[RMDB]
RNA sequence: GGGAACGACUCGAGUAGAGUCGAAAAUUAAAGUCCUACAAGAUGUUUCACUUUCUCAGCGAAGUCAAGGUGUUAGAGGCAUAAUUAGUAGCAUCAGUUCAGAAGCAAUUCCGAGAUUUCUUGCUCCAAUCAUUAUAGAUGGAAUCUUAACACACAAUAACGGUAUAGACUUCGGUCUAUACCGUUAAAAAGAAACAACAACAACAAC
Reactivity to 2A3 in 0.01 (KOAc 150mM, MgCl2 10mM, bicine 150mM(pH8.5), 24C), signal-to-noise 2, nucleotides 027 to 156: u120u050a000a060a000g010u000c010c000u000a030c030a030a050g000a110u090g010u030u080u090c030a040c040u080u080u020c060u030c070a070g010c030g070a080a010g030u100c050a060a010g030g010u000g040u100u080a010g000a060g080g000c010a010u060a080a090u190u040a040g050u040a010g020c050a030u040c030a020g050u050u060c060a010g010a110a000g000c070a070a110u090u050c040c030g040a050g000a040u010u000u110c020u020u090g000c010u000c000c010a150a060u040c040a070u030u260a120u090a190g010a000u040g000g020a000a020u000c010u050u080a060a020c030a020c070a000c000a050a180
Reactivity to DMS in 0.01 (KOAc 150mM, MgCl2 10mM, bicine 150mM(pH8.5), 24C), signal-to-noise 2, nucleotides 027 to 156: u000u000a100a110a130g030u010c010c000u010a080c090a130a190g000a080u000g000u000u000u000c030a130c010u000u000u000c040u000c080a100g020c070g000a060a090g010u000c060a050a080g010g040u010g020u000u000a040g000a070g000g040c040a100u010a050a100u010u010a050g020u000a040g010c000a040u000c020a040g030u000u000c100a070g020a050a080g030c130a060a150u010u000c010c000g000a160g000a050u000u000u000c010u000u000g010c030u000c030c050a040a040u000c040a050u000u000a110u000a040g010a090u000g000g000a080a160u000c030u000u000a060a140c080a090c060a050c080a090a200
This 207-nucleotide RNA was probed chemically with 2A3 and DMS. Reactivities are given for positions 27 through 156. Conditions: 150 mM KOAc, 10 mM MgCl2 and 150 mM bicine (pH 8.5), 24 C. The data come from the RNA Mapping Database (RMDB), library OK3TST. DMS adducts were read by reverse transcription with MarathonRT. For 2A3 the reverse transcriptase was SuperScript II with manganese. For DMS, 3,150 sequencing reads were counted.